[RMDB]
RNA sequence: GGGAACGACUCGAGUAGAGUCGAAAACAAGUUGGCUUCGGCCAACUUGAAAAGAAUGCUAGACUGAGACCGCUAAACUCAGAUAACCAAAAAUAGCGGAAAAAAGAUCAGUGUUCGCACUGAUCAACAGAAAUAGGAUGUUCGCAUCCUAUUUCUGAAAAGAAACAACAACAACAAC
Reactivity to 2A3 in 0.01 (KOAc 150mM, MgCl2 10mM, bicine 150mM(pH8.5), 24C), signal-to-noise 4, nucleotides 027 to 126: c000a000a000g000u000u010g010g000c000u040u120c300g060g000c000c000a000a010c000u000u000g000a000a000a000a010g110a100a060u220g060c120u140a020g050a190c000u000g000a000g020a040c010c010g000c020u020a110a110a020c000u010c010a010g020a230u110a050a070c020c010a030a000a000a030a020u010a010g000c000g020g030a070a010a000a000a010a020g000a000u000c010a000g010u000g030u050u080c200g040c050a000c000u000g000a000u000c000a010a010
Reactivity to DMS in 0.01 (KOAc 150mM, MgCl2 10mM, bicine 150mM(pH8.5), 24C), signal-to-noise 3, nucleotides 027 to 126: c000a020a010g000u010u000g010g000c020u000u020c230g040g030c000c000a000a020c000u000u000g000a040a090a050a120g010a090a080u020g010c110u010a100g020a290c010u010g000a000g010a100c000c020g020c010u000a010a110a090c010u000c000a010g000a230u000a050a170c030c040a030a040a030a020a210u010a030g000c000g000g000a000a020a040a070a050a080g000a010u000c000a010g000u000g000u000u020c220g040c000a010c000u010g000a000u000c000a080a140
Chemical mapping of a 177-nucleotide RNA with 2A3 and DMS. DMS adducts were read by reverse transcription with MarathonRT. Source: RMDB library M2PK50, as collected in RNAgym. Conditions: 150 mM KOAc, 10 mM MgCl2 and 150 mM bicine (pH 8.5), 24 C.